RNA sequence: GGGAACGACUCGAGUAGAGUCGAAAACUAAAUCCCCUUCGGGGUCAGUGCGCUACCAGCACAGGGCCGCACGCCUCUCCUGCUAGCCGUGUGGCUCUUAAAGAGCCCCACACCCCUCCGCCCUGCGCAGACACGACAGUUUCGACUGUCGUGUCUGAAAAGAAACAACAACAACAAC
Reactivity to 2A3 in 0.01 (KOAc 150mM, MgCl2 10mM, bicine 150mM(pH8.5), 24C), signal-to-noise 3, nucleotides 027 to 126: c030u090a080a070a080u050c020c010c000c000u110u140c090g010g000g020g010u020c010a060g020u020g020c010g010c040u110a120c020c050a060g020c030a030c020a010g010g010g000c000c000g020c000a010c000g010c000c000u030c030u050c050c010u040g100c080u090a020g020c030c060g030u000g000u010g010g020c000u000c000u040u070a090a100a000g030a010g020c000c000c000c000a020c010a000c000c010c000c000u030c000c040g010c000c020c000u020g000c040g000
Reactivity to DMS in 0.01 (KOAc 150mM, MgCl2 10mM, bicine 150mM(pH8.5), 24C), signal-to-noise 1, nucleotides 027 to 126: c130u030a120a110a030u070c010c000c030c120u100u050c100g000g000g000g020u000c030a080g020u000g010c000g000c180u000a140c190c090a180g000c000a090c060a050g000g000g050c010c010g010c060a010c000g000c130c000u000c080u000c060c030u000g030c000u000a070g010c240c050g000u010g040u010g020g010c000u000c000u010u000a040a170a100g000a080g000c010c030c010c000a060c080a130c070c000c030c000u000c020c050g000c060c030c000u010g030c100g070
The record gives the reactivity of an RNA of 177 nucleotides to 2A3 and DMS. DMS adducts were read by reverse transcription with MarathonRT. High DMS reactivity at an A or C suggests that its Watson-Crick edge is free. The DMS profile rests on 1,406 reads. The data come from the RNA Mapping Database (RMDB), library RFM100.